[RMDB]
RNA sequence: GGGAACGACUCGAGUAGAGUCGAAAAACGCUUCACAAUGUGCGGCAAAGCAACAUUGUUUAUGCAAAGGCACUUCGCAAUGUGUGCUCAAACAUUGCUUAUUCAAACACGCUUCACAAUGUGCGACAAAACUUCACGGUCUUCGGACCGUGAAGAAGAUGUUACCGAAGUUCGCUUCGGUAACAUCAAAAGAAACAACAACAACAAC
Reactivity to DMS in 0.01 (KOAc 150mM, MgCl2 10mM, bicine 150mM(pH8.5), 24C), signal-to-noise 1, nucleotides 027 to 156: a110c030g000c010u010u000c090a050c030a020a020u000g000u000g000c040g000g080c110a040a120a040g010c060a030a030c010a020u010u010g060u000u000u010a030u000g010c070a020a200a160g010g040c000a030c070u000u000c260g030c120a160a000u010g080u000g010u010g000c030u000c010a030a140a020c020a070u000u000g010c000u000u000a050u020u020c020a150a150a070c030a030c050g000c020u010u000c120a050c150a120a080u000g010u010g000c040g000a210c100a050a040a080a100c000u010u010c010a000c000g010g000u000c010u010u000c220g040g000a030c000c000g030u020g040a000a000g000a030a090
Reactivity to 2A3 in 0.01 (KOAc 150mM, MgCl2 10mM, bicine 150mM(pH8.5), 24C), signal-to-noise 8, nucleotides 027 to 156: a000c040g010c020u030u020c020a000c000a010a020u030g000u000g010c030g090g040c140a090a060a030g020c010a030a080c010a020u000u020g040u050u060u070a110u130g030c040a090a080a090g200g000c010a010c040u050u040c030g010c020a020a020u020g020u000g030u020g030c070u090c150a040a040a010c010a020u000u010g010c000u090u130a190u100u130c080a020a080a030c070a020c090g040c040u100u100c080a040c030a130a170u150g030u050g040c020g060a050c090a010a110a060a060c000u000u000c000a000c000g000g000u010c000u030u080c100g080g000a000c000c000g000u000g010a000a000g000a000a010